The record gives the reactivity of an RNA of 207 nucleotides to 2A3. As a SHAPE reagent, 2A3 marks flexible, mostly unpaired nucleotides at the ribose 2'-OH.
RNA sequence: GGGAACGACUCGAGUAGAGUCGAAAAGAACCAUUCGUGGUUCGGAAAGAUAUGGACAGGCUGGAGUGCUGCUACCCACCGACAGUAAUCGGAAACGAUUAGUCGAGGCAGCACGAUGAAAGCCUGUCCUAAGUCAGCAGAUCGCAUUCGUGCGAAAGAAAACAUGCCUGUUCGCAGGCAUGUUUUCAAAAGAAACAACAACAACAAC
Reactivity to 2A3 in 0.01 (KOAc 150mM, MgCl2 10mM, bicine 150mM(pH8.5), 24C), signal-to-noise 1, nucleotides 027 to 156: g020a010a000c000c040a020u140u180c300g100u030g000g000u010u000c000g000g000a110a120a000g010a000u020a000u050g030g000a000c000a000g000g000c010u020g000g070a250g060u010g000c050u000g000c000u030a070c070c020c080a020c010c000g000a000c020a090g300u250a000a000u000c010g000g000a010a000a000c000g000a000u000u050a000g010u000c010g000a020g010g000c040a000g020c020a000c000g010a020u000g010a070a000a010g000c000c000u000g010u010c000c000u010a000a000g000u020c010a000g040c010a040g060a270u030c010g060c030a020u030u120c200g120u020g000c010g020a000a050a120